[RMDB]
RNA sequence: GGGAACGACUCGAGUAGAGUCGAAAAGGGGUCGUUAGCCGUCCCGAAGAACUUUAAGACAUGAGCUGAAGCCUCCACGGCUCAACAGCUUAAAGGGAGGGACGUCUAACGACGGAGGCACCCAAAAGUGUACGCCUACUUCGGUAGGCGUACACAAGUACAGUGAUCGGUUCGCCGAUCACUGUACAAAAGAAACAACAACAACAAC
Reactivity to 2A3 in 0.01 (KOAc 150mM, MgCl2 10mM, bicine 150mM(pH8.5), 24C), signal-to-noise 2, nucleotides 027 to 156: g030g030g010g010u000c010g010u000u000a000g000c020c000g000u000c000c000c000g030a150a000g000a000a000c000u030u010u010a010a010g020a030c050a210u250g030a020g000c020u050g050a120a010g030c000c000u020c010c000a030c010g020g020c000u010c010a030a060c050a060g160c000u000u000a000a000a000g000g000g000a030g000g000g000a010c020g000u000c000u000a000a000c010g000a000c040g000g000a000g000g010c010a050c000c000c010a000a100a040a070g020u030g000u000a000c000g000c010c000u050a030c050u040u140c300g080g010u000a010g020g010c000g000u010a000c000a000c000a010a000